[RMDB]
RNA sequence: GGGAACGACUCGAGUAGAGUCGAAAACAAGUGGAGGGUGAGGUCCAGAUCGUGUCAACUGCUACCCAAACCUUCCUGGCAACGUGCAUCAAUGGGGUAUGCUGGACUGUCUACCACGGGGCCGGAACUUAAAAGGUUCCUUCGGGAACCUUUUAAGAAAAGAAACAACAACAACAAC
Reactivity to 2A3 in 0.01 (KOAc 150mM, MgCl2 10mM, bicine 150mM(pH8.5), 24C), signal-to-noise 6, nucleotides 027 to 126: c090a060a070g080u060g070g110a100g050g020g030u100g060a070g020g020u010c020c020a010g020a130u170c110g090u100g070u130c040a070a020c090u040g020c020u080a070c000c010c000a010a030a060c010c000u020u040c010c020u030g040g000c000a020a010c020g060u040g030c040a090u050c060a130a150u140g020g000g000g050u100a070u170g070c000u010g030g030a050c010u030g110u050c030u070a090c010c050a020c040g010g000g020g010c000c000g020g000a020a040
Reactivity to DMS in 0.01 (KOAc 150mM, MgCl2 10mM, bicine 150mM(pH8.5), 24C), signal-to-noise 4, nucleotides 027 to 126: c100a120a120g030u020g020g010a090g010g020g030u020g000a260g000g000u000c180c020a020g000a110u040c120g020u010g020u020c100a070a090c090u000g020c050u000a100c020c020c010a070a120a070c060c040u000u010c010c000u000g020g010c040a040a040c080g010u010g000c110a130u050c060a120a100u020g010g000g000g010u000a050u020g020c000u010g010g000a030c040u000g010u040c060u030a100c300c030a040c010g000g010g000g000c030c020g020g010a070a110
Source: RMDB library OK1LIB, as collected in RNAgym.
This 177-nucleotide RNA was probed chemically with 2A3 and DMS.
2A3 adducts were read by reverse transcription with SuperScript II with manganese.
The 2A3 profile rests on 4,400 reads.
Conditions: 150 mM KOAc, 10 mM MgCl2 and 150 mM bicine (pH 8.5), 24 C.